[RMDB]
RNA sequence: GGGAACGACUCGAGUAGAGUCGAAAAUAGCAGUUCCCAGGACCCCCUUCUAAAAUGACCGAGAGGGGGUGCUAGGAACACGGGGGCCCAGUGGAGCCAUGGGAUGCUCCUCCCGAUUCCGUCCAACAAACCUAAUUGUUCGCAAUUAGGAAAAGAAACAACAACAACAAC
Reactivity to 2A3 in 0.01 (KOAc 150mM, MgCl2 10mM, bicine 150mM(pH8.5), 24C), signal-to-noise 9, nucleotides 027 to 129: u130a020g060c060a010g010u010u000c000c000c000a000g010g040a000c000c000c010c020c010u040u020c030u080a110a170a190a190u250g120a130c080c130g090a060g010a010g120g000g000g000g000u000g010c000u010a010g000g010a010a000c070a030c100g010g000g010g010g020c000c010c010a020g030u070g040g030a040g020c060c050a170u150g030g040g020a060u130g020c010u010c010c000u010c010c000c000g000a000u070u000c010c010g030u050c050c010a050a050c040a070a100a060
Reactivity to DMS in 0.01 (KOAc 150mM, MgCl2 10mM, bicine 150mM(pH8.5), 24C), signal-to-noise 7, nucleotides 027 to 129: u050a050g060c110a110g020u030u040c010c000c020a050g050g000a050c010c010c020c010c010u020u020c000u010a060a100a160a120u030g040a140c220c170g000a030g000a040g020g010g030g010g010u000g020c020u010a060g000g000a000a000c010a090c000g000g000g000g000g000c000c010c010a120g040u070g000g000a040g040c050c050a150u060g040g050g030a180u050g020c000u030c000c000u000c000c000c000g020a230u030u030c020c020g030u060c010c000a040a060c120a080a070a110